[RMDB]
RNA sequence: GGGAACGACUCGAGUAGAGUCGAAAAGGGUUUGAGCCAUCGCCCGAAUAGGAUGGGUGAUACAAGUCGUCAUUGUACGCGACGUAGUACGUACUCAUUAGUGCGAAAGCACGGUUAGUCCGACUUGGCAGGGACGAUCUUCUGUCAAUACUUAGAACCUAUUUAUUACCUUCGGGUAAUAAAUAGGAAAAGAAACAACAACAACAAC
Reactivity to 2A3 in 0.01 (KOAc 150mM, MgCl2 10mM, bicine 150mM(pH8.5), 24C), signal-to-noise 6, nucleotides 027 to 156: g070g000g020u080u080u140g070a020g050c020c020a020u040c030g010c000c010c000g050a060a080u170a120g100g040a030u110g000g040g010u040g020a030u050a110c090a120a060g010u010c000g020u020c050a120u020u190g060u170a060c070g000c030g010a000c020g000u010a010g020u020a070c040g000u020a000c010u010c000a030u010u110a060g010u000g000c010g050a100a010a000g000c000a000c010g000g000u010u040a010g000u030c040c020g000a020c030u020u020g020g000c010a010g020g010g010a050c080g070a130u030c040u180u030c010u030g040u050c000a020a060u060a200c030u100u110a040g050a050a030
Reactivity to DMS in 0.01 (KOAc 150mM, MgCl2 10mM, bicine 150mM(pH8.5), 24C), signal-to-noise 2, nucleotides 027 to 156: g000g000g040u000u000u000g010a170g010c000c030a070u000c040g010c020c020c010g080a080a080u000a100g030g010a060u000g000g010g020u010g010a070u000a060c040a050a110g030u000c000g020u000c060a160u000u000g030u010a070c070g010c020g000a070c030g030u000a170g020u010a030c000g040u010a070c010u000c080a090u000u010a080g040u020g010c020g000a130a110a200g020c000a050c000g000g010u010u000a080g000u010c040c000g000a060c070u010u000g020g050c050a040g010g000g000a030c070g010a090u000c070u000u000c030u000g000u000c010a060a090u000a070c070u000u010a110g010a090a300